Structure probing data (DMS and 2A3) for a 177-nucleotide construct. The RNA was probed in 150 mM KOAc, 10 mM MgCl2 and 150 mM bicine (pH 8.5) at 24 C. For 2A3, 2,008 sequencing reads were counted. The data come from the RNA Mapping Database (RMDB), library RFMREP. DMS adducts were read by reverse transcription with MarathonRT. The DMS profile rests on 1,097 reads.
RNA sequence: GGGAACGACUCGAGUAGAGUCGAAAAGUUAAGUUUUCAAAUGAGCCUAACUCUGCCACAUAUAUCAUAUAGGAGCUGGCAAAGGCUUGAUGACAAAGAGAUCUCUCUCAAGCCUUUCCCACAUCAGCCUGUGAUAAUUGUUCGCAAUUAUCACAGGAAAAGAAACAACAACAACAAC
Reactivity to DMS in 0.01 (KOAc 150mM, MgCl2 10mM, bicine 150mM(pH8.5), 24C), signal-to-noise 2, nucleotides 027 to 126: g000u000u020a030a030g030u020u000u000u000c070a080a190a130u020g000a040g000c010c030u000a040a050c090u000c100u000g040c030c000a020c070a090u000a130u000a050u000c090a040u000a160u010a100g000g010a150g010c180u010g000g020c070a070a040a020g000g020c010u000u000g000a000u000g010a010c190a020a080a100g000a110g000a070u020c070u010c100u000c030u000c000a000a020g010c000c000u000u010u000c030c000c000a050c220a130u010c190a070g020
Reactivity to 2A3 in 0.01 (KOAc 150mM, MgCl2 10mM, bicine 150mM(pH8.5), 24C), signal-to-noise 3, nucleotides 027 to 126: g010u020u030a030a000g040u030u050u050u200c110a180a210a110u190g000a010g010c000c000u020a020a000c010u040c050u120g000c040c000a040c040a010u110a010u030a050u190c110a050u150a010u030a230g210g030a110g020c150u010g000g000c000a080a000a010g010g000c000u000u010g030a060u080g000a000c070a040a170a010g080a060g030a100u080c050u000c000u000c010u000c080a010a000g000c000c000u010u000u000c030c010c000a070c000a080u130c010a010g090